RNA sequence: GGGAACGACUCGAGUAGAGUCGAAAAGGAUUGCGGAUUGAAACUCAUCCGCAUGAAGCUGGAUUCGGUAGUAAUCGCGCCUCAGAAGGGCGCGGUGAAUACGUCCCUGCUCCUUGCACACACCGCCACCCAAACUAUAGUUCGCUAUAGUUUGGGUAAAAGAAACAACAACAACAAC
Reactivity to 2A3 in 0.01 (KOAc 150mM, MgCl2 10mM, bicine 150mM(pH8.5), 24C), signal-to-noise 9, nucleotides 027 to 126: g040g020a070u030u030g000c000g000g020a020u050u140g110a210a110a060c090u070c090a010u000c000c000g000c000a000u010g020a010a010g030c040u050g010g020a170u110u070c060g050g010u040a010g000u020a020a010u010c000g000c000g000c010c000u080c040a180g060a230a090g060g000g000c000g000c000g000g000u010g000a000a020u100a050c020g020u020c010c000c000u020g010c000u020c000c000u020u070g020c050a020c000a000c000a030c070c020g030c030c020
Reactivity to DMS in 0.01 (KOAc 150mM, MgCl2 10mM, bicine 150mM(pH8.5), 24C), signal-to-noise 9, nucleotides 027 to 126: g000g000a100u010u000g010c010g000g000a020u010u020g010a120a170a120c270u010c070a050u000c010c000g010c000a010u000g010a140a060g010c030u000g000g010a110u000u010c080g020g010u010a030g000u010a150a010u000c000g000c000g010c000c000u000c040a190g010a190a300g000g000g000c000g010c000g000g000u000g010a140a160u010a070c030g010u010c030c000c020u000g000c030u000c010c010u000u010g010c080a080c100a090c100a090c030c020g010c110c120
An RNA of 177 nucleotides, treated with 2A3 and DMS and read out base by base. For 2A3 the reverse transcriptase was SuperScript II with manganese. DMS adducts were read by reverse transcription with MarathonRT. Reactivities are rounded to 0.1 and cut off at 0 and 3. The RNA was probed in 150 mM KOAc, 10 mM MgCl2 and 150 mM bicine (pH 8.5) at 24 C.